[RMDB]
RNA sequence: GGGAACGACUCGAGUAGAGUCGAAAAAGCACUGGUACGAUACGUCGUACCAGUGCAGUCGUUGGGAUGGAACGCAAUGAAAUACAUGUGUGACGUGUAUUUGCGAACGACGUAAUUAUUUUUCAAAAUCACGCUAUCGUGUUCGCACGAUAGCGAACACGUGUUUAUAGUUCGCUAUAAACACGUGAAAAGAAACAACAACAACAAC
Reactivity to DMS in 0.01 (KOAc 150mM, MgCl2 10mM, bicine 150mM(pH8.5), 24C), signal-to-noise 2, nucleotides 027 to 156: a120g040c020a020c010u020g010g020u000a000c000g010a090u010a110c300g050u000c000g030u010a000c010c000a010g000u000g030c010a020g000u010c010g010u000u000g000g000g030a150u000g010g000a100a180c030g000c030a100a300u000g000a030a060a020u000a020c020a040u000g020u000g040u000g020a100c060g000u010g000u010a010u000u000u000g000c120g010a050a130c000g020a070c000g010u000a090a080u000u000a140u000u000u010u010u010c020a020a060a120a140u000c120a130c010g030c010u000a000u010c000g030u000g020u000u000c300g000c010a050c000g010a030u000a000g030c010g000a010a080
Reactivity to 2A3 in 0.01 (KOAc 150mM, MgCl2 10mM, bicine 150mM(pH8.5), 24C), signal-to-noise 6, nucleotides 027 to 156: a000g000c000a000c000u010g000g010u010a000c010g010a000u010a050c220g110u000c000g000u030a000c000c000a000g020u000g000c010a000g000u000c000g000u010u050g110g050g070a170u130g090g070a140a050c020g000c020a030a090u150g100a120a070a010u030a000c010a010u030g050u050g120u210g270a100c030g000u000g000u000a020u000u060u030g000c020g020a020a010c020g040a000c020g040u060a080a050u120u180a100u060u150u030u040u100c100a080a070a030a080u130c080a040c100g000c000u000a000u000c000g000u010g020u080u020c090g040c070a000c000g000a000u000a030g000c000g000a000a000